[RMDB]
RNA sequence: GGGAACGACUCGAGUAGAGUCGAAAAACUCUUAGACGUGGUGCUGUUCUUGGUUAUAUCGGUGCAACGGUUCGUCUGCAAGCUGGUAAACCUACUGAACACCCAUCUAAUAGUGGUUUGCUGACAUUGUGUGCUUUUGCACCUGACCCUGCUAAAGCAUUCCAGCCGCAUUCGUGCGGCUGGAAUGAAAAGAAACAACAACAACAAC
Reactivity to 2A3 in 0.01 (KOAc 150mM, MgCl2 10mM, bicine 150mM(pH8.5), 24C), signal-to-noise 2, nucleotides 027 to 156: a000c010u020c030u000u020a020g010a070c080g040u060g040g000u180g100c170u000g000u000u000c010u080u040g040g000u070u030a280u000a000u300c010g020g000u100g020c010a060a050c120g050g300u180u250c210g050u020c040u010g010c030a020a200g060c000u040g020g000u000a010a010a010c000c000u060a100c160u180g010a020a000c000a010c010c000c000a030u020c010u000a040a050u000a050g050u080g000g120u040u060u060g120c060u060g080a110c070a130u160u130g050u050g000u000g070c020u250u220u260u260g000c000a010c030c020u020g020a020c010c030c030u050g050c040u130a160a020a000g000

This 207-nucleotide RNA was probed chemically with 2A3. For 2A3 the reverse transcriptase was SuperScript II with manganese. The reactions ran in a buffer of 150 mM KOAc, 10 mM MgCl2 and 150 mM bicine (pH 8.5), at 24 C.